[RMDB]
Notes: An RNA of 177 nucleotides, treated with DMS and read out base by base. The data come from the RNA Mapping Database (RMDB), library TTRDES. For DMS, 1,025 sequencing reads were counted. Values cover nucleotides 27 to 126. The RNA was probed in 150 mM KOAc, 10 mM MgCl2 and 150 mM bicine (pH 8.5) at 24 C.
RNA sequence: GGGAACGACUCGAGUAGAGUCGAAAAAAAAAGAUAUGGAACUGACCCAGCGAAACUACGCGUUGAAAGCUACUCGGAAACGAGUAGCUGGAGCGUACCGAGUAGCUGCAGUUCCUAAGUCAAAAAACAAUAUUGCGAGGUUCGCCUCGCAAUAUUGAAAAGAAACAACAACAACAAC
Reactivity to DMS in 0.01 (KOAc 150mM, MgCl2 10mM, bicine 150mM(pH8.5), 24C), signal-to-noise 1, nucleotides 027 to 126: a020a050a090a090a110g020a010u010a170u020g030g000a040a000c000u000g000a300c200c300c090a010g010c030g010a120a290a180c160u000a020c000g000c010g000u000u010g000a120a220a040g000c010u010a000c000u010c000g000g000a030a010a020c000g010a010g010u000a040g010c000u000g010g020a010g010c000g010u000a000c290c070g010a040g020u000a150g010c000u000g030c000a010g000u000u000c000c000u010a000a040g020u030c000a030a050a020a110a070a160